[RMDB]
RNA sequence: GGGAACGACUCGAGUAGAGUCGAAAAGAUAUGGACGAUUGUGGAGCAACAGCGUGCGGUCGGAAACGACCGACACGACAUGCUCCACUGAUCGUCCUAAGUCAAAAUCCAUUGUUCGCAAUGGAAACACUUAUCACUCCUUCGGGAGUGAUAAGUGAAAAGAAACAACAACAACAAC
Reactivity to DMS in 0.01 (KOAc 150mM, MgCl2 10mM, bicine 150mM(pH8.5), 24C), signal-to-noise 2, nucleotides 027 to 126: g010a020u000a300u010g000g000a010c010g010a010u010u000g050u000g010g010a040g030c010a080a090c250a220g010c000g040u000g020c000g000g010u010c010g000g010a030a070a110c000g000a010c010c000g000a060c000a000c000g000a030c090a300u000g000c000u000c000c010a000c010u000g020a010u000c010g020u000c000c000u000a000a040g020u000c040a120a100a100a160u000c010c010a020u000u000g000u000u010c300g000c000a020a010u020g000g010a050a070a180
Reactivity to 2A3 in 0.01 (KOAc 150mM, MgCl2 10mM, bicine 150mM(pH8.5), 24C), signal-to-noise 2, nucleotides 027 to 126: g010a010u070a010u140g000g000a000c020g010a000u040u000g000u010g030g000a000g000c100a080a140c130a240g040c030g040u000g000c000g000g000u000c020g030g000a110a040a000c010g010a000c060c010g140a060c010a000c000g030a010c040a020u290g010c010u000c000c010a010c000u010g020a000u000c000g010u000c000c000u010a030a000g020u010c020a020a040a020a300u000c030c000a000u010u040g080u060u130c300g000c130a000a010u000g010g000a040a120a000